[RMDB]
RNA sequence: GGGAACGACUCGAGUAGAGUCGAAAACACCUAACGUUCGCGUUAGGUGAAAGAUGCAAGUAAACCUGGAUCGACGCAUCAUGAAGAACCAGGAGAAAUAUAAAACGACAGGGUUCGCCCUGUCGAAGUCAAUCUGCAUGUUCGCAUGCAGAUUGACAAAAGAAACAACAACAACAAC
Reactivity to 2A3 in 0.01 (KOAc 150mM, MgCl2 10mM, bicine 150mM(pH8.5), 24C), signal-to-noise 1, nucleotides 027 to 126: c000a000c000c000u010a040a000c010g050u040u060c230g000c000g120u000u000a000g020g010u000g000a000a000a000g020a020u080g040c100a050a110g060u200a140a040a030c030c000u000g040g020a060u050c050g050a020c030g070c030a130u110c040a020u200g030a040a060g020a020a020c010c010a020g040g000a070g040a020a070a010u180a000u020a060a110a030a030c000g000a000c000a000g040g000g060u070u040c140g130c000c010c000u000g010u010c010g010a010a000
Reactivity to DMS in 0.01 (KOAc 150mM, MgCl2 10mM, bicine 150mM(pH8.5), 24C), signal-to-noise 1, nucleotides 027 to 126: c000a010c000c000u000a000a000c000g060u010u000c260g000c010g070u000u000a000g000g000u020g000a020a100a020g000a130u000g040c050a100a100g000u000a060a050a070c000c000u000g010g010a100u000c100g030a230c110g030c140a110u000c100a040u010g000a030a190g000a040a070c000c000a000g000g030a140g000a120a040a030u020a110u010a050a010a160a130c010g000a000c000a010g000g000g020u030u030c160g020c040c000c000u010g010u000c000g000a000a000